An RNA of 177 nucleotides, treated with 2A3 and DMS and read out base by base. It was measured as part of the RMDB library TTRDEL. The DMS profile rests on 4,043 reads.
RNA sequence: GGGAACGACUCGAGUAGAGUCGAAAAGAUAUGGACUGAACCGCGAUGGUAGCGUUGAAAUCGGAAACGAUGGAGCUACGUUGCGUCCCAGUCCUAAGUCAAAGUACAACAGUUCGCUGUUGUACAAGGUAUUAGGUUUCUUCGGAAACCUAAUACCAAAAGAAACAACAACAACAAC
Reactivity to 2A3 in 0.01 (KOAc 150mM, MgCl2 10mM, bicine 150mM(pH8.5), 24C), signal-to-noise 4, nucleotides 027 to 126: g020a010u090a050u180g000g000a000c010u010g010a060a030c040c030g020c010g020a010u150g300g090u010a000g010c030g170u300u070g020a020a020a000u000c010g020g010a070a040a040c020g000a010u010g000g030a040g000c010u010a010c000g010u000u010g000c000g020u030c030c020c000a000g010u020c010c000u010a100a000g020u030c070a100a020a140g000u010a000c000a010a000c010a000g020u070u130c250g090c150u020g000u010u000g010u000a000c000a000a030
Reactivity to DMS in 0.01 (KOAc 150mM, MgCl2 10mM, bicine 150mM(pH8.5), 24C), signal-to-noise 4, nucleotides 027 to 126: g000a020u000a300u000g010g020a000c010u000g000a100a130c210c010g000c010g020a010u000g010g050u010a010g020c010g030u000u020g030a040a140a030u000c000g000g000a100a110a190c000g000a000u000g000g010a110g010c000u000a010c010g010u000u000g000c000g000u000c090c160c000a020g000u000c000c000u010a030a040g010u010c040a090a120a140g010u000a000c000a000a000c000a010g010u000u010c300g010c000u010g010u000u010g000u000a010c020a040a050

Values cover nucleotides 27 to 126. The reactions ran in a buffer of 150 mM KOAc, 10 mM MgCl2 and 150 mM bicine (pH 8.5), at 24 C. Reactivities are rounded to 0.1 and cut off at 0 and 3.